[RMDB]
RNA sequence: GGGAACGACUCGAGUAGAGUCGAAAAAGAGCCACGCGUUCCCAACUCCACGUAGCUGGGAGUUUGCAAGCAGUCUACUCAAGAGGUGUCAGGAGGCGGGUGGAUGUAAGCGCAUCGAAGACGAUGAAUGCUUGGUAUCAUUCGUGAUACCAAGCAUAAAAGAAACAACAACAACAAC
Reactivity to DMS in 0.01 (KOAc 150mM, MgCl2 10mM, bicine 150mM(pH8.5), 24C), signal-to-noise 2, nucleotides 027 to 126: a110g010a150g020c030c050a070c100g010c050g000u000u000c000c000c000a130a050c030u010c010c020a090c170g030u000a080g010c080u020g000g000g000a060g000u000u010u000g000c150a070a090g000c060a060g020u010c010u000a050c030u000c070a100a090g010a080g010g020u010g000u010c080a090g030g010a070g010g000c110g000g020g020u000g000g000a050u010g010u010a100a130g020c050g020c030a030u000c040g010a100a100g020a100c060g000a070u010g000a090

The data come from the RNA Mapping Database (RMDB), library OK2TST. Chemical mapping of a 177-nucleotide RNA with DMS. The reactions ran in a buffer of 150 mM KOAc, 10 mM MgCl2 and 150 mM bicine (pH 8.5), at 24 C. Reactivities are rounded to 0.1 and cut off at 0 and 3. For DMS the reverse transcriptase was MarathonRT.